Notes:
Source: RMDB library OK3TST, as collected in RNAgym. Chemical mapping of a 207-nucleotide RNA with 2A3. 2A3 adducts were read by reverse transcription with SuperScript II with manganese. The RNA was probed in 150 mM KOAc, 10 mM MgCl2 and 150 mM bicine (pH 8.5) at 24 C.
[RMDB]
RNA sequence: GGGAACGACUCGAGUAGAGUCGAAAAGCGAGAUUUUCAUGAGCGUCAGCAAGAACAACACCGAAUUAAGGCAAUCGAUGAUCGUUUGCAUCGCUCGUUUCGUAAGAGUAAUAAUUUUAUGAAGGAGUGGUGGCGGAAGUAUGAUGCUGGCAUACUACCUGACUACGCAUUUCGAUGCGUAGUCAGGAAAAGAAACAACAACAACAAC
Reactivity to 2A3 in 0.01 (KOAc 150mM, MgCl2 10mM, bicine 150mM(pH8.5), 24C), signal-to-noise 1, nucleotides 027 to 156: g080c080g030a080g010a080u140u140u050u180c080a060u050g190a020g110c140g010u020c000a020g030c000a030a140g070a050a010c000a100a000c000a020c040c030g000a040a050u120u190a240a000g140g000c000a000a190u080c040g050a060u150g090a030u090c040g020u010u080u200g060c030a030u050c000g000c010u000c000g040u020u020u020c000g030u030a000a000g000a000g070u060a210a010u300a300a050u070u010u000u000a030u000g000a000a030g000g010a000g020u030g060g000u000g000g080c030g100g000a020a020g020u100a070u140g200a030u070g120c000u030g000g000c030a100u070a170c020u060a020